[RMDB]
RNA sequence: GGGAACGACUCGAGUAGAGUCGAAAACCGCCGUCUCGCAAACGGGCGCUGGCUUUAGGAAAGGAUGUUCCGUGGCCGUAAAUGCAGGUUCACAGCGCUUCGUAUCGCGGCAAUAUCGCCAGUGGUGGCAUUAAAUUAUGUUCGCAUAAUUUAAUGCAAAAGAAACAACAACAACAAC
Reactivity to 2A3 in 0.01 (KOAc 150mM, MgCl2 10mM, bicine 150mM(pH8.5), 24C), signal-to-noise 9, nucleotides 027 to 126: c000c000g000c000c010g040u020c050u060c070g040c060a080a050a030c020g010g020g000c000g000c010u010g010g010c010u100u100u180a120g030g070a060a040a030g150g100a140u160g120u110u010c020c020g130u070g060g000c010c000g020u060a070a090a020u150g000c050a030g050g040u120u150c100a040c010a100g010c010g000c000u190u180c030g020u040a060u100c030g000c000g010g000c000a010a020u110a060u120c050g010c020c020a060g020u050g090g070u050g060
Reactivity to DMS in 0.01 (KOAc 150mM, MgCl2 10mM, bicine 150mM(pH8.5), 24C), signal-to-noise 9, nucleotides 027 to 126: c030c010g020c050c040g000u000c040u010c160g010c140a080a150a030c020g010g000g010c020g020c020u000g000g000c040u000u000u010a090g010g010a060a060a120g010g010a130u020g010u000u000c000c010g010u010g010g020c030c020g010u010a040a070a090u010g010c050a080g000g010u010u000c110a150c080a060g010c040g010c020u000u010c060g030u000a060u000c110g010c010g000g010c050a120a110u010a060u000c080g010c020c010a060g030u000g020g030u000g010